[RMDB]
RNA sequence: GGGAACGACUCGAGUAGAGUCGAAAAGAUAUGGAGUCAUCCUUCGCAAGGCCGGCUCUCGGAAACGAGAGAAGGCUGAUGACCGAAGGAGUGACUCCUAAGUCAAAGACACUCUUCGGAGUGUCAAGGACUAAUAUCGGUUCGCCGAUAUUAGUCCAAAAGAAACAACAACAACAAC
Reactivity to 2A3 in 0.01 (KOAc 150mM, MgCl2 10mM, bicine 150mM(pH8.5), 24C), signal-to-noise 2, nucleotides 027 to 126: g050a000u080a040u240g000g000a000g010u010c000a020u050c000c010u000u000c030g020c090a160a300g040g000c020c020g030g050c010u000c000u000c000g040g020a120a080a040c030g000a010g010a000g000a020a020g010g000c000u050g030a090u110g040a030c100c040g000a000a000g000g010a040g070u060g000a000c000u010c000c000u010a010a000g000u010c020a000a160a000g010a000c000a010c000u000c000u040u160c300g180g010a000g000u010g000u010c010a000a020
Reactivity to DMS in 0.01 (KOAc 150mM, MgCl2 10mM, bicine 150mM(pH8.5), 24C), signal-to-noise 3, nucleotides 027 to 126: g000a070u010a300u020g010g000a000g040u000c010a040u000c000c000u000u000c000g000c090a080a200g000g020c020c000g010g040c020u000c000u010c010g020g000a210a080a200c010g010a020g010a040g000a020a020g000g000c010u000g000a080u000g000a180c300c020g010a020a000g000g010a010g000u000g020a020c000u000c000c000u010a010a050g020u000c030a120a150a150g020a010c010a000c000u000c010u000u020c180g030g000a030g040u010g020u000c000a010a080

This 177-nucleotide RNA was probed chemically with 2A3 and DMS.
Conditions: 150 mM KOAc, 10 mM MgCl2 and 150 mM bicine (pH 8.5), 24 C.
For 2A3, 4,864 sequencing reads were counted.
The data come from the RNA Mapping Database (RMDB), library TTRDES.
For DMS, 2,109 sequencing reads were counted.